An RNA of 177 nucleotides, treated with 2A3 and DMS and read out base by base. 2A3 adducts were read by reverse transcription with SuperScript II with manganese. Source: RMDB library M2PK90, as collected in RNAgym. Conditions: 150 mM KOAc, 10 mM MgCl2 and 150 mM bicine (pH 8.5), 24 C.
RNA sequence: GGGAACGACUCGAGUAGAGUCGAAAAAAAAACGAUGAUCCAGUUGUUGCGGUGAUUAUCGUAGCUAUCAGCUGGAUCAUCAAUCGGUGGCGACACCGAACGAUAACCGCAGACAUGCUGAAAAAAAGUUUACUUAGUUGUUCGCAACUAAGUAAACAAAAGAAACAACAACAACAAC
Reactivity to 2A3 in 0.01 (KOAc 150mM, MgCl2 10mM, bicine 150mM(pH8.5), 24C), signal-to-noise 4, nucleotides 027 to 126: a000a000a000a000a000c090g000a000u000g000a000u000c000c010a000g000u040u020g020u030u020g020c010g010g060u110g110a300u150u300a070u170c020g020u000a010g020c040u080a040u150c030a010g000c000u000g000g000a000u010c000a000u000c000a000a010u000c010g010g000u000g000g030c020g010a030c000a000c000c010g000a020a000c010g000a010u060a090a060c010c030g000c020a000g050a110c050a110u120g040c030u120g140a090a020a010a000a000a020a060
Reactivity to DMS in 0.01 (KOAc 150mM, MgCl2 10mM, bicine 150mM(pH8.5), 24C), signal-to-noise 3, nucleotides 027 to 126: a020a050a030a050a100c130g010a010u000g010a020u000c000c010a010g010u000u000g000u000u000g000c020g000g010u000g000a190u020u010a040u000c030g020u000a080g010c120u000a060u000c080a020g000c030u000g010g000a010u000c020a000u000c000a040a030u000c010g020g020u000g000g000c300g000a230c020a010c000c000g000a030a050c210g000a150u000a060a140c030c030g000c050a040g000a120c230a040u000g010c050u000g010a000a010a030a080a080a080a100